[RMDB]
RNA sequence: GGGAACGACUCGAGUAGAGUCGAAAAGGAGUGGACGGCAUCAAGGUGAAGGAGGUAGCCUUUGGUGCGCCAGACUGCGUCACGCCUCACGUAAAGCUGUGCGUCCACGCAGAAAAGAUGUCCAGGCUGAUACGCAAGCGUUCGCGCUUGCGUAUCAAAAAGAAACAACAACAACAAC
Reactivity to 2A3 in 0.01 (KOAc 150mM, MgCl2 10mM, bicine 150mM(pH8.5), 24C), signal-to-noise 1, nucleotides 027 to 126: g140g030a080g060u040g030g000a000c000g040g070c010a000u000c010a010a030g010g020u030g070a070a030g170g040a070g020g060u010a010g020c000c000u030u060u100g020g000u000g000c000g040c010c010a010g010a060c030u010g040c000g010u010c010a010c060g020c000c020u080c010a050c030g140u120a190a000a080g060c090u060g060u100g020c020g000u000c080c010a000c040g000c000a010g020a000a110a000a020g070a070u130g000u000c010c020a020g080g020c020
Reactivity to DMS in 0.01 (KOAc 150mM, MgCl2 10mM, bicine 150mM(pH8.5), 24C), signal-to-noise 2, nucleotides 027 to 126: g000g020a120g060u020g000g010a070c030g000g040c000a040u000c030a040a010g000g020u000g000a130a120g020g000a050g010g020u000a300g010c010c010u000u010u000g020g040u000g020c070g000c040c050a050g010a160c000u000g000c030g010u000c300a000c060g000c020c020u010c100a070c120g010u000a060a090a120g000c150u000g020u000g040c040g030u000c070c080a010c030g020c020a000g000a080a050a100a120g010a070u010g020u000c030c010a100g000g020c150
Conditions: 150 mM KOAc, 10 mM MgCl2 and 150 mM bicine (pH 8.5), 24 C. Chemical mapping of a 177-nucleotide RNA with 2A3 and DMS. DMS adducts were read by reverse transcription with MarathonRT. For 2A3, 1,690 sequencing reads were counted. Reactivities are given for positions 27 through 126.